[RMDB]
RNA sequence: GGGAACGACUCGAGUAGAGUCGAAAAGUGAUCACGCGAUCCGAGACCCCGCGUGAUCACGAGUUUAGGGGUCAGGACAUGUUAUGCUGGCUAUACGUACGCACCUAAGGGCUGCGGGUGCGUACGAAUCUUACGCAGCCCGCUGUUGCCAGCUAGACGUAUAUGCGUCAUUCGUGACGCAUAUACGAAAAGAAACAACAACAACAAC
Reactivity to 2A3 in 0.01 (KOAc 150mM, MgCl2 10mM, bicine 150mM(pH8.5), 24C), signal-to-noise 2, nucleotides 027 to 156: g000u010g000a000u000c000a000c000g030c000g050a080u070c080c050g020a050g060a230c000c000c030c050g010c020g000u000g010a020u000c000a000c010g000a010g020u050u090u190a070g000g040g000g010u000c030a010g040g070a060c050a160u190g070u150u230a140u120g090c040u000g000g070c090u080a040u000a240c020g010u010a000c010g020c000a000c020c000u030a090a180g000g000g000c000u000g000c000g000g010g030u010g000c000g000u000a000c000g000a000a000u030c010u060u030a050c070g000c000a000g000c000c000c000g040c010u030g000u010u030g000c010c050a060g000c030u020a020g020a060